[RMDB]
Structure probing data (2A3 and DMS) for a 207-nucleotide construct. For 2A3 the reverse transcriptase was SuperScript II with manganese. For 2A3, 1,248 sequencing reads were counted. It was measured as part of the RMDB library OK3TST. Conditions: 150 mM KOAc, 10 mM MgCl2 and 150 mM bicine (pH 8.5), 24 C.

RNA sequence: GGGAACGACUCGAGUAGAGUCGAAAAUUCAUCUAAUUUUUGCAAAAGCUCUUUGAGUACAUUAGGCCAGUCUCCAUUUUAUUAAUACGGAUGAGGAAAGUGAGACCAAGACUUGAGUUCAAUGACUUGCCCAGAGUCGUGCAAAGCAUAAGGGGCGAUAUACCAUGAAAUUCGUUUCAUGGUAUAUAAAAGAAACAACAACAACAAC
Reactivity to 2A3 in 0.01 (KOAc 150mM, MgCl2 10mM, bicine 150mM(pH8.5), 24C), signal-to-noise 3, nucleotides 027 to 156: u010u020c020a030u070c040u110a240a140u090u060u170u200u170g020c050a110a080a050a040g010c030u010c000u100u170u140g020a020g010u050a100c050a100u070u150a060g050g000c030c020a020g050u000c010u000c040c020a010u030u050u070u160a060u030u190a070a040u100a050c070g050g020a030u090g030a110g030g050a090a050a010g060u080g040a040g010a010c040c020a040a040g000a040c040u070u090g010a020g050u010u100c040a050a070u070g020a030c000u020u060g010c020c000c000a000g010a010g010u010c000g010u000g030c020a130a090a020g000c010a020u070a110a070g010g000g020g010c020g020
Reactivity to DMS in 0.01 (KOAc 150mM, MgCl2 10mM, bicine 150mM(pH8.5), 24C), signal-to-noise 3, nucleotides 027 to 156: u010u000c040a090u010c030u010a040a060u010u010u000u010u010g000c040a080a080a110a250g010c030u000c010u010u010u010g010a120g020u000a090c060a110u000u010a070g020g040c000c010a050g010u000c010u010c030c030a130u000u000u010u020a250u020u010a130a180u010a190c100g030g020a050u000g000a100g040g000a050a060a130g030u000g020a110g010a030c050c020a070a090g050a030c010u000u000g000a070g010u010u010c040a070a120u010g010a040c030u000u000g000c020c020c020a240g010a030g010u000c010g000u030g020c070a040a050a120g010c090a100u000a020a070g020g060g040g030c020g000